This 207-nucleotide RNA was probed chemically with DMS and 2A3. For DMS the reverse transcriptase was MarathonRT.
[RMDB]
RNA sequence: GGGAACGACUCGAGUAGAGUCGAAAAUGAGUGCGGGGCUCGGAGAUGGAGCCGUGGUCCUCUAGGUGGAAAACGAAACGGUGGCUCUGGGAUUUCACCGUAACAACCCUCGCAUUGACCUUCCUCUUCCAAGCUAGAGAGGUCAGAGGAGGUAAGACAUGCAUUGGUAGUUCGCUACCAAUGCAUGAAAAGAAACAACAACAACAAC
Reactivity to DMS in 0.01 (KOAc 150mM, MgCl2 10mM, bicine 150mM(pH8.5), 24C), signal-to-noise 2, nucleotides 027 to 156: u010g000a090g060u000g010c100g040g020g010g000c030u000c030g030g000a100g020a110u010g000g010a170g020c050c000g000u010g000g030u000c030c060u000c070u020a100g020g010u000g010g000a050a040a070a150c100g010a130a130a060c040g020g010u000g010g000c030u000c010u010g020g050g030a240u010u000u000c020a070c000c000g000u000a020a090c070a100a130c060c020c020u000c030g000c070a140u010u000g020a010c010c020u000u020c110c000u000c030u020u050c010c020a110a170g050c030u000a010g020a060g010a050g000g010u000c000a060g000a090g000g030a040g010g000u000a080a130g000a150
Reactivity to 2A3 in 0.01 (KOAc 150mM, MgCl2 10mM, bicine 150mM(pH8.5), 24C), signal-to-noise 3, nucleotides 027 to 156: u140g000a050g030u050g010c010g000g020g040g000c010u010c060g000g020a050g010a040u120g030g060a050g020c000c020g000u040g020g030u060c020c020u050c050u100a120g050g090u120g070g060a080a130a060a060c070g030a100a060a010c010g040g020u020g040g000c030u030c050u070g080g030g000a010u060u040u110c070a100c040c000g030u060a050a010c040a060a050c030c020c000u020c030g050c040a040u000u090g020a000c010c000u090u090c020c000u060c000u090u020c080c030a070a030g040c040u130a020g000a000g010a020g040g000u010c010a000g020a040g040g000a010g000g010u050a050a030g080a020
The 2A3 profile rests on 2,189 reads. High DMS reactivity at an A or C suggests that its Watson-Crick edge is free. The DMS profile rests on 2,861 reads.